[RMDB]
RNA sequence: GGGAACGACUCGAGUAGAGUCGAAAACGACACAGGUAGUCGAGGCGAGUAGCCUCAGGUGAGCGAGAGAACUCUCGUUAAGGAACUCGGCAAAAUGACCCCGUAACUUCGGGAGAAGGGGUGCUGACUUACUCUGUCGUUUCGACGACAGAGUAAGAAAAGAAACAACAACAACAAC
Reactivity to DMS in 0.01 (KOAc 150mM, MgCl2 10mM, bicine 150mM(pH8.5), 24C), signal-to-noise 3, nucleotides 027 to 126: c050g020a090c100a080c140a140g010g010u000a070g010u000c030g020a080g020g000c020g010a170g030u010a160g010c010c000u010c050a060g010g020u000g000a060g000c010g000a070g000a100g010a130a200c080u000c010u000c000g020u000u000a080a030g010g010a060a100c060u000c020g010g030c050a090a040a070a020u000g010a080c050c000c000c020g010u000a150a140c090u000u010c060g050g020g010a070g010a080a100g000g000g020g030u020g000c090u010g010a190
Reactivity to 2A3 in 0.01 (KOAc 150mM, MgCl2 10mM, bicine 150mM(pH8.5), 24C), signal-to-noise 2, nucleotides 027 to 126: c010g070a000c040a000c010a070g080g170u150a010g110u120c030g000a000g000g040c000g000a070g050u130a040g070c000c000u000c000a000g020g100u070g070a060g020c030g030a000g010a000g020a150a140c050u000c000u010c030g040u080u050a100a050g080g000a030a050c020u000c020g000g030c060a070a000a020a300u140g070a080c000c010c000c000g030u010a020a060c020u050u090c140g120g000g010a030g000a010a010g000g010g000g000u020g020c040u040g010a030